[RMDB]
RNA sequence: GGGAACGACUCGAGUAGAGUCGAAAAGUCCCCAGUAUGACGUUAAACUGCUGACUCAUACAUACUGACACCGGUUGCUCAACAGGCUGUGUGGGACAAUAGAAUAACAAGGCCGUCAAUUUGAGCUAAAACUCCUCGGGGUUCGCCCCGAGGAGAACUAAGGUCAUAGGUUCGCCUAUGACCUUAGAAAAGAAACAACAACAACAAC
Reactivity to 2A3 in 0.01 (KOAc 150mM, MgCl2 10mM, bicine 150mM(pH8.5), 24C), signal-to-noise 3, nucleotides 027 to 156: g020u010c000c000c020c000a010g010u010a000u070g030a000c040g010u020u090a080a110a070c050u120g050c020u030g030a040c010u020c030a040u070a080c000a040u080a040c030u070g060a030c020a070c080c020g170g010u060u130g010c010u000c000a020a070c020a060g030g000c010u010g020u030g020u080g100g010g030a010c020a020a050u140a110g150a090a030u130a110a020c050a050a030g050g000c030c010g090u080c040a050a060u040u040u110g010a010g000c000u050a080a120a100a090c000u010c000c010u000c000g000g050g000g010u030u040c160g070c000c000c000c010g000a000g000g000a000g000a000a000
Reactivity to DMS in 0.01 (KOAc 150mM, MgCl2 10mM, bicine 150mM(pH8.5), 24C), signal-to-noise 2, nucleotides 027 to 156: g000u000c020c000c000c000a120g020u000a010u000g020a030c030g010u010u000a010a020a090c040u000g030c050u000g000a290c020u030c020a050u000a030c010a110u000a080c020u010g030a120c100a100c050c060g000g010u010u000g000c030u010c020a070a110c030a070g050g030c020u000g010u020g010u000g010g000g000a110c050a070a120u020a110g030a090a170u000a070a110c040a070a080g030g000c000c010g020u010c040a050a140u000u010u000g000a100g030c020u000a060a050a160a080c010u000c010c000u010c010g010g000g010g060u000u000c210g000c000c000c010c000g010a020g010g000a000g010a000a060